RNA sequence: GGGAACGACUCGAGUAGAGUCGAAAAGAUGAGACACAGGUUGCAGCGUAAGUGCAGGGGGAGUUCUCCCUUCACACUUACAAACCGUGUGAAGGUGGAGAAGACACUUGAUAACUUAGGUCUCAGAGAUAGGUGUGUAGUUCGCUGCAUAUCUAUCAAAAGAAACAACAACAACAAC
Reactivity to DMS in 0.01 (KOAc 150mM, MgCl2 10mM, bicine 150mM(pH8.5), 24C), signal-to-noise 9, nucleotides 027 to 126: g010a150u010g010a020g000a020c010a070c080a050g000g010u000u000g010c090a100g020c150g010u020a040a030g020u010g010c050a120g000g000g000g000g000a180g010u010u000c010u000c020c000c000u000u000c010a020c000a000c000u010u030a100c270a090a090a120c300c190g000u000g010u000g000a010a010g000g010u020g010g000a020g000a030a030g000a200c030a040c010u000u010g000a090u000a040a020c020u000u000a100g010g000u000c000u000c000a040g010a140
Reactivity to 2A3 in 0.01 (KOAc 150mM, MgCl2 10mM, bicine 150mM(pH8.5), 24C), signal-to-noise 9, nucleotides 027 to 126: g080a060u040g010a010g010a000c030a000c010a060g010g010u000u020g010c020a060g010c030g090u100a060a020g030u020g030c020a020g020g000g000g010g000a070g030u020u000c000u000c000c000c000u000u000c000a000c000a000c000u040u150a060c030a020a040a020c060c020g000u000g000u000g000a000a000g030g060u110g050g030a010g000a010a010g050a000c010a000c020u020u040g020a020u010a020a000c000u010u020a030g000g000u000c000u000c000a000g000a000